[RMDB]
RNA sequence: GGGAACGACUCGAGUAGAGUCGAAAAUCAGAAUUAGGCCGGAGUGUUUAGCGCUCCGUAAACACGGUCGUACAUCCAGCCGGUAGCCUGGUUCCUUGCAUUGAGUGAUGUACGGAGUUUAUAGAGCAAAAGAAAGACCUGUUCGCAGGUCUUUCAAGAGUAUUAUUAUGUUCGCAUAAUAAUACUCAAAAGAAACAACAACAACAAC
Reactivity to DMS in 0.01 (KOAc 150mM, MgCl2 10mM, bicine 150mM(pH8.5), 24C), signal-to-noise 2, nucleotides 027 to 156: u020c030a070g010a080a040u000u000a070g030g010c030c030g030g000a170g030u020g020u010u010u010a150g030c100g030c010u010c000c000g040u000a010a030a070c050a130c080g020g030u020c000g040u000a040c010a050u000c030c030a200g030c040c050g020g010u010a150g010c100c020u010g020g000u000u000c000c000u010u000g030c140a220u000u010g000a180g030u000g030a010u000g030u000a020c030g000g000a160g000u000u000u000a070u000a110g010a080g000c050a100a060a100a150g000a010a040a020g010a000c010c000u000g030u000u000c300g020c010a000g000g010u000c000u010u000u000c000a030a170
Reactivity to 2A3 in 0.01 (KOAc 150mM, MgCl2 10mM, bicine 150mM(pH8.5), 24C), signal-to-noise 4, nucleotides 027 to 156: u060c000a000g020a020a030u040u020a040g010g000c010c010g020g000a030g010u070g040u090u200u250a160g080c020g000c010u000c000c000g010u050a020a030a010c120a010c040g040g030u060c010g000u020a000c000a030u010c040c030a020g020c020c000g020g020u040a010g020c000c010u020g020g000u030u010c020c020u050u120g040c040a140u060u170g060a050g080u140g030a010u010g010u010a030c030g030g010a060g010u050u120u040a150u070a050g100a010g040c050a080a050a060a030g010a000a000a000g000a000c000c000u010g020u030u010c110g010c060a000g000g000u000c000u000u000u000c000a010a000
Structure probing data (DMS and 2A3) for a 207-nucleotide construct. Reactivities are given for positions 27 through 156. For DMS, 4,060 sequencing reads were counted. For DMS the reverse transcriptase was MarathonRT. Conditions: 150 mM KOAc, 10 mM MgCl2 and 150 mM bicine (pH 8.5), 24 C. 2A3 adducts were read by reverse transcription with SuperScript II with manganese.